[RMDB]
RNA sequence: GGGAACGACUCGAGUAGAGUCGAAAACAAGCCGGGCACCCGCGUGGUCAGCGUGAAGGACGGUACGUGCGACGUACCGACACUUCUGAUCGAGCCCGCCGCACCGGCGUAGUAAGGGCUCCGAGGACUGGCACCAUAUGUUCGCAUAUGGUGCCAGAAAAGAAACAACAACAACAAC
Reactivity to 2A3 in 0.01 (KOAc 150mM, MgCl2 10mM, bicine 150mM(pH8.5), 24C), signal-to-noise 2, nucleotides 027 to 126: c080a010a020g030c000c010g000g020g000c000a080c030c020c020g080c020g040u080g000g010u050c040a010g060c050g070u040g000a030a000g020g040a010c020g000g000u000a010c010g010u050g300c210g070a120c000g140u000a000c010c010g000a010c020a010c090u060u050c010u050g050a100u060c010g000a000g000c000c000c010g000c000c000g010c010a110c160c020g040g000c030g000u020a010g000u040a010a160g020g030g010c010u000c020c020g000a010g000g070a040
Reactivity to DMS in 0.01 (KOAc 150mM, MgCl2 10mM, bicine 150mM(pH8.5), 24C), signal-to-noise 1, nucleotides 027 to 126: c000a140a210g010c010c020g020g000g050c010a080c030c100c140g040c060g090u000g040g030u000c040a270g000c300g030u030g000a000a000g000g010a300c030g000g030u020a020c000g150u030g000c260g040a150c080g000u000a000c030c010g000a130c100a210c010u000u000c070u000g000a000u000c030g000a210g000c020c010c030g000c050c130g020c060a140c040c010g000g000c020g020u040a050g000u000a080a010g000g030g050c020u000c000c040g010a040g000g020a200
The record gives the reactivity of an RNA of 177 nucleotides to 2A3 and DMS. For 2A3 the reverse transcriptase was SuperScript II with manganese. For DMS, 1,382 sequencing reads were counted.